[RMDB]
The record gives the reactivity of an RNA of 177 nucleotides to DMS and 2A3.
It was measured as part of the RMDB library OK1LIB.
For 2A3, 91,178 sequencing reads were counted.
2A3 adducts were read by reverse transcription with SuperScript II with manganese.
The reactions ran in a buffer of 150 mM KOAc, 10 mM MgCl2 and 150 mM bicine (pH 8.5), at 24 C.
The DMS profile rests on 108,126 reads.
RNA sequence: GGGAACGACUCGAGUAGAGUCGAAAAGAAUGACACUAAUGCACUAGCAGAGGUCCUCGUUGACGAUCGCGAGCCUAGUAUGACAGAGCGCUGAUAGAGCAUGUGCAUCAAUGCUGUACACAGGCUGAGAUGUAUGGUCGUUCGCGAUCAUGCAUCUAAAAGAAACAACAACAACAAC
Reactivity to DMS in 0.01 (KOAc 150mM, MgCl2 10mM, bicine 150mM(pH8.5), 24C), signal-to-noise 9, nucleotides 027 to 126: g010a090a050u010g000a090c070a060c040u010a060a080u010g010c010a080c090u020a060g010c050a060g010a130g000g000u010c030c020u010c070g010u020u010g010a080c110g000a070u010c040g000c050g010a080g000c030c030u010a070g010u020a060u030g010a080c080a080g010a120g010c040g010c020u000g000a220u010a040g000a050g010c020a030u000g010u010g000c060a060u020c080a070a060u010g000c010u010g000u010a050c090a060c060a060g000g010c020u000g000
Reactivity to 2A3 in 0.01 (KOAc 150mM, MgCl2 10mM, bicine 150mM(pH8.5), 24C), signal-to-noise 9, nucleotides 027 to 126: g130a020a090u140g040a030c020a010c070u110a080a040u060g010c010a020c070u070a050g010c030a010g040a030g070g040u040c020c010u020c030g060u050u140g070a070c070g050a080u080c030g010c010g030a010g000c000c010u060a070g040u070a090u140g050a040c030a040g070a020g040c050g000c040u030g030a090u060a070g070a010g020c020a030u070g030u050g050c010a010u050c030a030a090u100g010c020u040g030u080a020c080a010c010a050g060g000c010u030g050